About this RNA
Structure probing data (DMS) for a 177-nucleotide construct. For DMS the reverse transcriptase was MarathonRT. Values cover nucleotides 27 to 126. The reactions ran in a buffer of 150 mM KOAc, 10 mM MgCl2 and 150 mM bicine (pH 8.5), at 24 C. DMS (dimethyl sulfate) methylates the pairing face of unpaired adenines and cytosines.

[RMDB]
RNA sequence: GGGAACGACUCGAGUAGAGUCGAAAAGAUACCAGAACAGAAGACAAGAAAGAAUUGUGGUUCAUGUCCCACAAAGGAUUAAUGCUGAAUGGUAUGUUCAUACCUAAGUUAGAGGAGGAAAGAAUCGGCCCUCCCGUUAAUUCGUUAACGGGAGGGCAAAAGAAACAACAACAACAAC
Reactivity to DMS in 0.01 (KOAc 150mM, MgCl2 10mM, bicine 150mM(pH8.5), 24C), signal-to-noise 1, nucleotides 027 to 126: g000a110u100a160c000c000a040g000a080a110c050a070g000a090a000g000a110c200a050a020g140a170a090a020g000a280a090u000u000g070u000g010g000u040u030c090a050u000g000u000c210c000c000a010c040a040a020a020g000g040a070u000u000a050a080u000g000c010u000g000a030a100u040g000g000u000a000u000g000u070u110c000a020u000a070c000c000u000a070a020g050u090u010a170g000a090g000g000a220g000g000a050a020a210g000a080a030u000c060g030